[RMDB]
RNA sequence: GGGAACGACUCGAGUAGAGUCGAAAAUUCGGAGAAGGAAUAAAGGAACGCAUGACCUUAUAGAUUUUCAAUCUAUUAAAUUACCUCACUCAUUCAGCUUACCGGACGCUUUUUGCAUGGCUGAGAGUCUUCCUUCAGAAUUCGUUCUGAAGGAAGAAAAAGAAACAACAACAACAAC
Reactivity to 2A3 in 0.01 (KOAc 150mM, MgCl2 10mM, bicine 150mM(pH8.5), 24C), signal-to-noise 9, nucleotides 027 to 126: u050u020c020g030g020a070g030a060a030g070g020a010a040u070a110a100a020g050g000a090a030c050g030c110a070u100g050a060c000c000u020u040a010u010a010g020a010u040u090u110u190c120a030a020u010c000u030a010u030u160a040a090a080u130u110a130c010c010u020c030a040c010u020c010a090u120u020c020a020g010c000u040u080a070c030c020g080g030a070c040g060c070u080u110u050u160u180g050c040a060u080g040g000c020u020g020a020g000a010g070
Reactivity to DMS in 0.01 (KOAc 150mM, MgCl2 10mM, bicine 150mM(pH8.5), 24C), signal-to-noise 4, nucleotides 027 to 126: u010u000c030g010g000a050g010a120a040g000g000a090a070u020a070a070a040g000g000a100a090c150g000c100a050u010g000a110c040c040u010u000a030u000a000g000a020u000u010u030u030c180a050a030u000c000u000a010u000u020a030a070a060u020u020a090c070c030u010c100a090c040u000c020a090u010u010c040a010g010c010u000u030a080c110c050g000g010a060c140g000c060u010u010u000u020u010g010c050a080u000g000g010c030u000g000a050g000a070g020